[RMDB]
RNA sequence: GGGAACGACUCGAGUAGAGUCGAAAAACGGUCGUACGCGACCGAGGCGCGGCUAGGUCGACGGACCGAACUAUGGCAUCCCGCAUUCUGCCAUCCGCCGCGCAGCUUCUUCUCAAACGGUGCGGAAAAAAGUAGGACACCUUCGGGUGUCCUACAACAAUCAGCCUAAGUUCGCUUAGGCUGAUUGAAAAGAAACAACAACAACAAC
Reactivity to DMS in 0.01 (KOAc 150mM, MgCl2 10mM, bicine 150mM(pH8.5), 24C), signal-to-noise 1, nucleotides 027 to 156: a100c030g050g010u020c030g000u000a110c190g080c090g010a000c030c000g000a030g010g010c020g050c040g000g000c030u000a110g010g000u000c010g050a120c300g040g010a050c020c000g030a030a070c260u000a050u000g050g000c040a130u000c050c010c000g000c090a060u000u000c020u000g000c000c010a040u010c040c030g000c080c000g040c000g050c010a040g000c020u000u010c080u000u000c070u000c060a130a070a040c170g060g040u000g000c010g090g030a030a030a010a040a090a150g010u000a000g000g010a040c010a000c000c010u000u010c300g000g080g020u010g000u010c000c000u000a020c000a050a100
Reactivity to 2A3 in 0.01 (KOAc 150mM, MgCl2 10mM, bicine 150mM(pH8.5), 24C), signal-to-noise 2, nucleotides 027 to 156: a000c000g000g000u000c000g020u050a050c260g030c030g120a000c000c000g000a040g020g010c000g010c000g010g000c010u010a010g010g010u010c030g100a160c190g190g020a000c010c000g000a000a000c010u010a000u000g000g000c000a040u090c050c000c000g000c000a030u300u100c030u040g000c000c000a010u010c010c030g000c000c000g000c020g010c000a010g020c010u150u120c010u090u010c030u020c010a110a130a020c060g010g000u030g000c000g000g000a040a090a030a010a000a000g000u000a000g000g000a000c000a000c010c010u030u110c220g020g010g000u010g000u000c000c000u000a000c010a000a000